[RMDB]
RNA sequence: GGGAACGACUCGAGUAGAGUCGAAAAGACUUCAUCUCAAAAAAAAAAAAAAAUUAGCUGGGCAUGGUGGUGGGCACCUGAAAUCCCAGCUACUCGGGAGUCUGAGGCAGGAGAAUCGCUUGAACCCCACUUUCUCUUUGUUCGCAAAGAGAAAGUGAAAAGAAACAACAACAACAAC
Reactivity to 2A3 in 0.01 (KOAc 150mM, MgCl2 10mM, bicine 150mM(pH8.5), 24C), signal-to-noise 2, nucleotides 027 to 126: g010a010c000u050u030c040a160u040c060u070c130a060a050a020a000a020a020a000a000a000a000a000a010a070a090a090u070u020a030g010c000u000g020g010g020c020a030u050g020g010u010g010g120u150g070g140g070c030a020c010c000u010g030a110a070a010u010c000c000c000a000g010c000u000a020c030u020c010g020g010g000a020g020u020c000u020g010a040g030g020c030a010g020g060a080g090a110a090u070c060g000c010u020u020g030a070a070c000c010c000
An RNA of 177 nucleotides, treated with 2A3 and read out base by base. For 2A3, 1,403 sequencing reads were counted. Values cover nucleotides 27 to 126. Source: RMDB library OK1LIB, as collected in RNAgym.